[RMDB]
RNA sequence: GGGAACGACUCGAGUAGAGUCGAAAAGGUACUCGCGACAUCGCUGACGCUGUAACUGCAGCUGGCGUUGAAGUGGCUAAGAGCGAAGUUCGUCUGCCGAACGGCGUUCUGCGUACCACUGGCGAAACUAGGGACUAUCAUUCGUGAUAGUCCCUAGAAAAGAAACAACAACAACAAC
Reactivity to 2A3 in 0.01 (KOAc 150mM, MgCl2 10mM, bicine 150mM(pH8.5), 24C), signal-to-noise 4, nucleotides 027 to 126: g080g020u070a060c040u010c040g020c000g060a050c020a030u020c000g000c020u060g120a090c150g020c020u030g050u130a300a250c110u270g020c000a000g000c000u030g010g000c000g000u020u020g030a050a000g000u020g030g000c040u090a040a010g010a000g020c000g010a020a000g010u000u000c020g030u090c180u300g190c140c020g010a000a000c000g000g000c010g000u000u000c010u010g050c040g030u070a100c000c010a010c020u020g100g040c030g030a050a020a030
Reactivity to DMS in 0.01 (KOAc 150mM, MgCl2 10mM, bicine 150mM(pH8.5), 24C), signal-to-noise 8, nucleotides 027 to 126: g010g020u000a060c080u010c020g010c010g030a300c030a020u000c000g020c000u000g000a060c250g020c000u000g010u000a130a150c300u020g010c000a010g010c000u000g000g000c000g010u000u000g010a120a090g020u000g000g010c080u000a140a010g000a030g000c000g000a020a020g010u000u000c010g010u020c210u010g030c250c020g000a020a010c010g010g010c000g010u000u000c000u000g000c270g000u000a110c000c000a030c030u000g010g000c020g010a060a100a180